Chemical mapping of a 177-nucleotide RNA with 2A3 and DMS. Conditions: 150 mM KOAc, 10 mM MgCl2 and 150 mM bicine (pH 8.5), 24 C. Reactivities are given for positions 27 through 126.
RNA sequence: GGGAACGACUCGAGUAGAGUCGAAAAGAGGGGAUGAAAUCGUUGGGGGCUAUCCCCCUUCGUUGACAGAGCCUCAGAGGAAGCGCGGGCUAAGUUCGUGCCAGCAGCCGCGGUAAUACGAACUGCGGAUCGCCUGGUCAUUCGUGACCAGGCGAUCAAAAGAAACAACAACAACAAC
Reactivity to 2A3 in 0.01 (KOAc 150mM, MgCl2 10mM, bicine 150mM(pH8.5), 24C), signal-to-noise 2, nucleotides 027 to 126: g010a010g030g030g000g010a000u050g000a070a000a000u030c000g010u020u000g000g000g000g000g080c190u260a160u300c000c000c000c000c000u000u000c000g000u000u010g050a010c000a000g000a020g020c000c000u000c020a000g010a010g060g080a160a050g030c020g010c030g010g030g000c050u100a120a000g050u010u020c030g000u040g040c030c030a010g000c000a010g000c010c040g000c060g000g000u030a040a080u200a060c160g030a080a000c030u010g000c080g020
Reactivity to DMS in 0.01 (KOAc 150mM, MgCl2 10mM, bicine 150mM(pH8.5), 24C), signal-to-noise 1, nucleotides 027 to 126: g000a070g000g000g020g000a300u020g000a000a150a040u000c000g000u000u020g000g010g040g000g000c300u050a070u120c000c000c000c000c000u000u000c000g090u000u000g000a300c000a080g010a300g120c010c020u000c010a140g000a080g020g040a260a100g000c020g000c030g000g000g000c000u010a000a040g000u000u000c000g000u000g000c020c030a040g000c040a030g000c000c000g000c010g000g030u000a220a090u030a090c110g000a110a010c040u000g000c010g000